[RMDB]
RNA sequence: GGGAACGACUCGAGUAGAGUCGAAAAGUCUCUUCCUUGCAGCGAUGCACCUUCGCCGUCAUCAGCGAGGCGAUCGGCUGGUCGAGACAUUCGCCACCGUGCUUGGCCACAGCGUUGACCACAUCGCAAUUACCCAGGCUUUCGAGCCUGGGUAAUUAAAAGAAACAACAACAACAAC
Reactivity to DMS in 0.01 (KOAc 150mM, MgCl2 10mM, bicine 150mM(pH8.5), 24C), signal-to-noise 2, nucleotides 027 to 126: g010u000c000u000c030u000u030c010c030u010u030g040c030a020g000c120g020a010u010g000c100a280c060c030u000u000c040g000c000c030g010u020c130a150u000c000a120g000c110g020a300g000g050c140g020a020u000c000g020g110c180u020g000g070u050c020g020a060g000a040c120a070u000u000c080g000c000c070a090c080c090g010u020g050c070u000u000g050g000c050c050a120c060a130g000c130g020u050u000g000a080c040c060a130c060a150u050c050g020c130
Reactivity to 2A3 in 0.01 (KOAc 150mM, MgCl2 10mM, bicine 150mM(pH8.5), 24C), signal-to-noise 3, nucleotides 027 to 126: g010u000c000u000c000u040u060c030c010u090u170g060c010a020g150c050g020a020u050g120c110a060c000c010u190u280c040g000c020c020g230u260c060a260u070c040a060g010c000g000a020g010g010c010g040a020u030c000g000g000c060u040g020g030u110c040g000a000g030a030c020a080u050u010c080g090c020c000a040c000c030g050u090g020c050u050u120g010g050c020c000a040c000a020g010c030g020u040u050g060a090c030c030a020c050a150u020c010g020c060